[RMDB]
RNA sequence: GGGAACGACUCGAGUAGAGUCGAAAAGGACACCGCGCUGCUGCCCACGCUGGCGUUCCUGGUGGACGUGCGGCACGUGUCGGUGUACGGCAGCGUUUACGCCAUCGCGGACAUCUCCUACUCCGUCCUUUCGAUCUCUUUUCGAAGAGAUCGAAAGAAAAGAAACAACAACAACAAC
Reactivity to DMS in 0.01 (KOAc 150mM, MgCl2 10mM, bicine 150mM(pH8.5), 24C), signal-to-noise 2, nucleotides 027 to 126: g010g010a010c090a090c090c090g010c010g010c060u000g020c000u000g010c030c150c070a040c040g000c070u000g010g010c020g020u000u000c000c020u000g030g010u010g000g000a040c020g010u000g010c040g010g000c040a060c090g000u010g010u010c060g000g000u010g040u000a070c030g000g000c030a070g000c040g000u000u020u010a080c080g010c020c030a040u020c070g000c010g000g010a020c090a050u000c100u000c050c020u010a110c140u000c050c010g010u010c100
Reactivity to 2A3 in 0.01 (KOAc 150mM, MgCl2 10mM, bicine 150mM(pH8.5), 24C), signal-to-noise 2, nucleotides 027 to 126: g060g010a000c030a010c060c010g000c000g010c010u030g020c010u030g000c000c020c000a020c020g020c040u070g090g030c010g020u040u030c020c030u150g140g060u200g060g070a020c020g040u200g050c080g080g030c040a030c090g070u080g090u140c050g000g020u080g000u050a070c040g020g000c000a000g020c020g020u050u130u130a070c070g020c000c010a040u100c080g010c020g020g000a040c010a090u100c070u000c030c000u020a070c020u010c020c010g090u070c010